Chemical mapping of a 177-nucleotide RNA with 2A3 and DMS. Reactivities are given for positions 27 through 126. The 2A3 profile rests on 2,747 reads. The data come from the RNA Mapping Database (RMDB), library OK2TST. 2A3 adducts were read by reverse transcription with SuperScript II with manganese.

RNA sequence: GGGAACGACUCGAGUAGAGUCGAAAAUAUGCCAGCAAGGGCGGGUUGGCGUGGGCCGUUCCAGCGGGCGCUUUAAACCGCGGGUCGUGGUCGCCAUCGCGCUGGACGAUCAGCAGCGCAUCGUCGACAUUAGGUCACUGUUCGCAGUGACCUAAUGAAAAGAAACAACAACAACAAC
Reactivity to 2A3 in 0.01 (KOAc 150mM, MgCl2 10mM, bicine 150mM(pH8.5), 24C), signal-to-noise 2, nucleotides 027 to 126: u150a040u060g040c010c000a010g060c060a050a060g060g040g070c060g040g030g000u080u100g030g000c040g000u080g030g040g010c030c040g010u060u060c010c010a010g020c000g030g020g000c050g010c000u120u150u180a130a140a000c000c020g010c000g050g050g030u100c070g010u060g000g030u080c030g000c020c000a040u120c100g020c000g000c030u030g020g060a060c000g020a060u080c050a010g110c010a010g010c000g010c060a050u070c030g050u000c020g000a020
Reactivity to DMS in 0.01 (KOAc 150mM, MgCl2 10mM, bicine 150mM(pH8.5), 24C), signal-to-noise 5, nucleotides 027 to 126: u010a070u010g010c010c010a050g020c110a110a090g010g010g010c050g010g010g020u000u000g000g000c030g020u010g020g010g010c050c010g000u010u010c030c040a080g000c030g010g010g010c100g020c290u000u000u010a060a100a080c080c060g010c030g010g010g010u010c050g050u000g020g000u000c020g010c030c020a070u010c120g010c030g010c020u000g010g000a040c070g000a040u000c080a110g010c040a060g000c030g010c060a080u000c050g020u000c040g010a230